[RMDB]
RNA sequence: GGGAACGACUCGAGUAGAGUCGAAAAGAUUGCUAUUCGUAGCAAUCAGUUAUUCCUAAGUCUAUAGCGAUGAAAUCCUGUGGUGGAGUCGGAAACGACGUUGAAACCACGGAUGGAGCUAUAGAUAUGGAUCGAUGGGGUCACUUCGGUGACCCAAAACGUUCAAUCAGUUCGCUGAUUGAACGUUAAAAGAAACAACAACAACAAC
Reactivity to DMS in 0.01 (KOAc 150mM, MgCl2 10mM, bicine 150mM(pH8.5), 24C), signal-to-noise 1, nucleotides 027 to 156: g000a020u000u000g000c000u000a060u010u010c170g090u000a010g020c000a060a010u000c000a160g000u020u010a110u000u000c020c030u000a090a300g000u010c000u020a010u000a030g010c000g000a170u030g020a170a140a050u000c000c000u000g090u020g030g060u000g020g000a190g030u000c020g000g000a210a120a300c000g020a030c000g000u010u000g030a220a200a080c000c000a000c040g010g010a020u000g000g010a110g000c030u010a020u000a000g020a010u010a080u020g010g010a100u000c140g000a160u000g010g000g000g000u000c000a010c050u000u010c210g060g010u000g000a020c000c000c010a000a000
An RNA of 207 nucleotides, treated with DMS and read out base by base. DMS adducts were read by reverse transcription with MarathonRT. Values cover nucleotides 27 to 156. For DMS, 2,051 sequencing reads were counted. The RNA was probed in 150 mM KOAc, 10 mM MgCl2 and 150 mM bicine (pH 8.5) at 24 C.